Background
The record gives the reactivity of an RNA of 207 nucleotides to DMS and 2A3. For 2A3, 1,983 sequencing reads were counted. The data come from the RNA Mapping Database (RMDB), library PDB130.

RNA sequence: GGGAACGACUCGAGUAGAGUCGAAAAAUGGAGGAGCAUGGUGCACUGCAGGGCUCCUGAAAAGGAGUCCUGGCAGAAGGGUUCGCCUUUCUCCCGUAGGGACGACUUUCUUUGAAAAAAGGAAGUCCCAGUUUGCUUCGGCGAACUCCGACUCUAGCGAGUAUUGUAUGUUCGCAUACAAUACUCGAAAAGAAACAACAACAACAAC
Reactivity to DMS in 0.01 (KOAc 150mM, MgCl2 10mM, bicine 150mM(pH8.5), 24C), signal-to-noise 2, nucleotides 027 to 156: a090u000g000g000a050g020g000a060g050c030a130u010g050g040u000g000c010a170c010u000g010c010a060g020g010g020c000u010c010c010u010g000a070a090a190a020g010g010a040g020u010c010c010u000g000g020c020a020g010a160a070g000g020g000u000u000c030g030c020c010u000u000u000c050u000c000c020c090g010u000a140g020g040g030a090c080g000a080c000u000u000u000c010u010u030u010g010a000a100a160a020a040a030g000g010a020a080g020u000c010c010c010a070g010u000u000u000g010c020u000u000c180g020g020c000g020a010a040c010u020c020c010g010a070c070u010c010u000a120g020
Reactivity to 2A3 in 0.01 (KOAc 150mM, MgCl2 10mM, bicine 150mM(pH8.5), 24C), signal-to-noise 2, nucleotides 027 to 156: a010u150g030g020a080g020g000a030g010c060a050u100g000g070u090g040c070a020c060u000g000c000a010g000g020g000c010u010c020c000u000g040a050a060a010a010g000g000a000g000u020c000c010u010g000g010c010a010g030a050a020g010g010g000u040u030c020g000c000c000u070u110u010c040u020c000c010c000g060u130a150g030g000g000a020c060g020a030c110u030u010u010c030u000u060u070g130a110a070a000a000a000a000g000g020a020a010g000u010c010c000c000a010g000u040u120u080g040c010u070u100c060g000g000c000g000a000a000c000u020c030c020g070a080c010u020c010u070a050g060